[RMDB]
RNA sequence: GGGAACGACUCGAGUAGAGUCGAAAAUAAAUACAAGCGAAGUCGUGAAGAUGACGGAAAGUAUGCAAAAAAACCGCUGGAUUACUUUUUGCGCGACAUUAAUCGAGUACACAUGCAGACAAAUUUGAAAGAAGGUCAAUAUGUAAAAUUUUGCAAAGUAUAGCUGAGCAUUCGUGCUCAGCUAUACAAAAGAAACAACAACAACAAC
Reactivity to 2A3 in 0.01 (KOAc 150mM, MgCl2 10mM, bicine 150mM(pH8.5), 24C), signal-to-noise 1, nucleotides 027 to 156: u050a040a060a000u230a010c030a060a040g020c050g060a020a060g040u030c010g020u020g040a130a010g020a100u100g050a010c000g010g030a030a000a040g040u030a010u060g000c030a040a000a000a000a050a050a050c040c070g010c170u080g040g070a080u110u160a050c070u040u080u020u020u240g040c060g000c040g000a010c010a040u070u170a050a030u040c030g000a000g030u040a000c040a000c010a030u020g050c010a000g020a050c040a030a150a030u210u050u110g040a140a120a040g090a000a010g060g030u010c010a010a030u100a010u070g000u040a020a090a160a180u100u160u100u050g020c000a040a040a040